[RMDB]
RNA sequence: GGGAACGACUCGAGUAGAGUCGAAAAUCUUACCUCGUUAAAAAUGGUGGGAAAAGAUAACUGCCAACGAAAACUACGCUUUAGCUGCUUAAUAACGCAGCUACGUCCUGACGGAAGCUUGCCCGGGGCUUCUGUCGGGGCGUGACCGGACCGGGCUCUGAAGAUUGAAGUUCGCUUCAAUCUUCAGAAAAGAAACAACAACAACAAC
Reactivity to 2A3 in 0.01 (KOAc 150mM, MgCl2 10mM, bicine 150mM(pH8.5), 24C), signal-to-noise 2, nucleotides 027 to 156: u000c010u030u070a110c060c040u030c030g040u030u080a020a110a090a080a170u170g000g010u110g020g000g100a040a170a080a050g140a040u190a110a050c020u030g010c000c000a030a010c030g050a000a050a130a030c100u180a100c070g080c080u110u130u040a010g010c000u010g000c010u170u170a170a060u130a300a000c100g010c000a010g000c010u010a000c010g000u000c000c000u010g010a000c000g000g000a000a000g000c040u050u080g000c010c010c000g020g000g000g000c000u000u000c000u010g000u000c000g000g010g000g000c000g000u000g000a000c010c050g050g040a020c020c000g000g000g000c000u040